Conditions: 150 mM KOAc, 10 mM MgCl2 and 150 mM bicine (pH 8.5), 24 C.
This 177-nucleotide RNA was probed chemically with DMS and 2A3.
The DMS profile rests on 1,711 reads.
For 2A3, 1,244 sequencing reads were counted.
RNA sequence: GGGAACGACUCGAGUAGAGUCGAAAAGUUUGUCAAGCGAUUAGGAACUCACGCGGCGAUUUUUACCGUGCCCAACUUCCUGGAGUUGGACUACUGGCAGACCUGGCAUUACGGUGACUCCACCAUGAGUAGUGGGGUAUUUCGAUACCCCACUACUAAAAGAAACAACAACAACAAC
Reactivity to DMS in 0.01 (KOAc 150mM, MgCl2 10mM, bicine 150mM(pH8.5), 24C), signal-to-noise 2, nucleotides 027 to 126: g000u010u000u010g050u000c050a110a110g030c060g010a140u020u030a110g020g010a060a070c070u000c090a100c070g010c070g010g020c040g010a040u010u000u010u010u000a060c030c060g030u010g020c030c030c030a010a030c060u000u010c050c120u000g020g000a070g020u010u000g000g020a060c050u030a070c050u000g020g000c070a040g010a080c040c030u000g010g010c080a080u000u010a070c110g020g030u000g000a070c080u020c060c020a100c100c040a100u000g000
Reactivity to 2A3 in 0.01 (KOAc 150mM, MgCl2 10mM, bicine 150mM(pH8.5), 24C), signal-to-noise 1, nucleotides 027 to 126: g000u050u060u090g060u050c040a110a020g030c020g060a080u100u100a060g050g070a040a060c030u000c110a020c010g000c000g000g010c040g070a030u120u060u000u000u190a030c000c010g010u030g010c000c000c000a030a050c010u090u060c010c070u080g120g040a040g000u030u020g000g020a000c010u050a020c000u090g050g000c010a030g030a110c000c000u020g040g020c030a030u040u080a050c060g040g020u040g010a040c020u000c000c020a020c030c020a070u120g070